This 177-nucleotide RNA was probed chemically with DMS. The reactions ran in a buffer of 150 mM KOAc, 10 mM MgCl2 and 150 mM bicine (pH 8.5), at 24 C. For DMS the reverse transcriptase was MarathonRT.
RNA sequence: GGGAACGACUCGAGUAGAGUCGAAAAAAAAGAUAUGGAUAUACAGAGCUGCCCGCUUCGUUGAUCUAAGUUCGGAAACGAACUUAGGGAGAAGUGGGCAGCGACGAAGUAUAUCCUAAGUCAAAAAGACCUAAAACAAGUUCGCUUGUUUUAGGUCAAAAGAAACAACAACAACAAC
Reactivity to DMS in 0.01 (KOAc 150mM, MgCl2 10mM, bicine 150mM(pH8.5), 24C), signal-to-noise 2, nucleotides 027 to 126: a060a010a220a140g020a020u000a300u000g000g010a000u010a010u000a000c020a080g020a300g020c000u010g010c020c000c010g030c000u010u010c010g020u010u000g040a020u000c010u000a010a010g000u000u010c000g000g010a150a080a190c000g010a000a000c000u000u000a000g010g010g010a030g000a010a020g050u000g000g000g000c000a000g000c000g000a050c270g000a110a110g010u000a000u000a010u000c000c000u000a020a070g030u010c010a070a060a130a070a080